[RMDB]
RNA sequence: GGGAACGACUCGAGUAGAGUCGAAAAGGUCGCUUCGGCGACCACCACAGCGUACUACUAGUGGGAGGUAUGGAAGAAGCUGUCCCAAAUAGGACAGUGUAAACAUACUACCCACCCGUAACAUCUAGUAUCGCCUCUGCGCCCCUUCGGGGGCGAAGACUGAACAUUAAUUCGUUAAUGUUCAGUCAAAAGAAACAACAACAACAAC
Reactivity to 2A3 in 0.01 (KOAc 150mM, MgCl2 10mM, bicine 150mM(pH8.5), 24C), signal-to-noise 9, nucleotides 027 to 156: g000g000u010c010g000c030u050u110c240g140g000c000g010a000c000c000a010c000c010a040c030a010g020c010g020u030a030c020u010a010c010u060a050g010u030g000g030g030a170g050g000u000a000u010g000g070a160a220g000a010a000g240c010u000g020u020c000c020c030a240a300a180u300a070g000g000a000c000a000g000u010g000u110a000a000a000c000a000u010a000c010u110a140c010c000c000a010c010c000c010g100u110a160a110c040a200u110c050u070a010g010u020a060u300c040g030c020c020u090c070u170g020c010g000c010c000c010c000u020u140c260g080g000g000g000g000c000g000a030a000
Reactivity to DMS in 0.01 (KOAc 150mM, MgCl2 10mM, bicine 150mM(pH8.5), 24C), signal-to-noise 2, nucleotides 027 to 156: g010g000u010c010g020c020u010u000c280g080g010c010g060a010c000c090a040c010c040a070c050a020g030c040g140u000a040c000u000a050c040u010a050g010u000g010g000g060a300g040g040u020a010u010g010g010a060a170g000a160a300g040c010u000g010u000c010c000c030a070a140a120u040a030g000g030a010c040a000g000u000g010u000a040a150a300c000a000u010a020c000u000a280c010c000c030a030c000c000c090g020u010a060a070c120a130u000c070u000a010g020u000a070u040c030g050c000c010u000c100u000g000c020g010c000c000c000c000u000u000c120g030g000g000g090g060c000g000a000a070